RNA sequence: GGGAACGACUCGAGUAGAGUCGAAAACUAAGGAGUGUGUAACAACUCACCUGCCGAAUCAACUAGCCCCGAAAAUGGAUGGCGCUGAAGCGCGCGACCCACACCCGGCCAUCUGGGCGAACGCCAUUCUGUCUUGUUACUUCGGUAACAAGACAGAAAAAGAAACAACAACAACAAC
Reactivity to DMS in 0.01 (KOAc 150mM, MgCl2 10mM, bicine 150mM(pH8.5), 24C), signal-to-noise 1, nucleotides 027 to 126: c150u040a060a020g000g010a210g010u000g110u000g000u030a060a140c180a220a110c020u000c020a040c000c000u000g040c000c000g030a120a060u040c060a110a060c100u000a090g010c020c000c000c090g050a000a050a070a090u010g000g010a040u000g010g000c010g000c000u010g010a100a060g000c030g040c010g000c000g000a020c040c040c050a070c050a050c050c000c090g040g000c110c000a040u000c000u030g000g000g040c000g010a000a060c110g030c120c000a150u020
Reactivity to 2A3 in 0.01 (KOAc 150mM, MgCl2 10mM, bicine 150mM(pH8.5), 24C), signal-to-noise 3, nucleotides 027 to 126: c050u090a040a060g060g020a080g020u060g020u060g040u160a160a060c060a040a060c040u010c010a030c000c000u070g030c050c000g050a020a050u100c020a020a070c050u060a030g010c020c000c000c000g100a080a090a010a000u150g030g020a050u050g020g020c030g000c050u100g050a120a030g040c030g000c020g000c020g040a050c010c020c010a050c010a000c030c010c000g000g020c020c000a060u040c050u070g010g000g020c020g020a070a010c080g020c030c010a020u020
Notes
This 177-nucleotide RNA was probed chemically with DMS and 2A3. The RNA was probed in 150 mM KOAc, 10 mM MgCl2 and 150 mM bicine (pH 8.5) at 24 C. Values cover nucleotides 27 to 126. High 2A3 reactivity points to a flexible backbone, as in loops and unpaired stretches.